The record gives the reactivity of an RNA of 177 nucleotides to 2A3 and DMS.
RNA sequence: GGGAACGACUCGAGUAGAGUCGAAAAUGAACCCAGGCUGCGCUUAGGGAUUGUAGAGAAUAUCAACAUGACAAAGCGAUCAAGAUUGAUGAUGCUUACGGGCGACAUUUAUUUUUGAGGCGCUCAAGGGAAAAUUAUACUUCGGUAUAAUUUUCCCAAAAGAAACAACAACAACAAC
Reactivity to 2A3 in 0.01 (KOAc 150mM, MgCl2 10mM, bicine 150mM(pH8.5), 24C), signal-to-noise 3, nucleotides 027 to 126: u130g020a090a070c000c000c000a000g020g000c050u070g010c020g000c000u040u100a110g060g000g060a070u060u130g020u120a020g010a020g060a130a000u110a020u260c030a030a020c020a060u000g040a030c020a030a080a000g030c000g000a000u020c000a000a020g020a070u000u080g010a040u020g010a000u150g030c020u020u050a050c140g080g000g000c010g020a010c000a010u080u110u070a040u020u100u050u040u120g040a060g010g200c030g080c010u040c070a060a120
Reactivity to DMS in 0.01 (KOAc 150mM, MgCl2 10mM, bicine 150mM(pH8.5), 24C), signal-to-noise 2, nucleotides 027 to 126: u020g000a130a180c010c020c000a180g000g030c030u000g020c010g040c020u010u010a090g000g000g010a060u000u000g020u000a110g000a100g020a220a090u090a030u000c070a060a040c060a060u030g000a240c060a030a110a000g000c030g020a300u000c000a030a010g040a020u010u000g020a030u020g000a120u010g000c020u000u000a140c120g030g000g000c000g050a050c020a000u000u010u000a020u000u000u030u020u000g000a030g010g000c030g000c020u020c160a040a170
About this RNA
Source: RMDB library OK1LIB, as collected in RNAgym.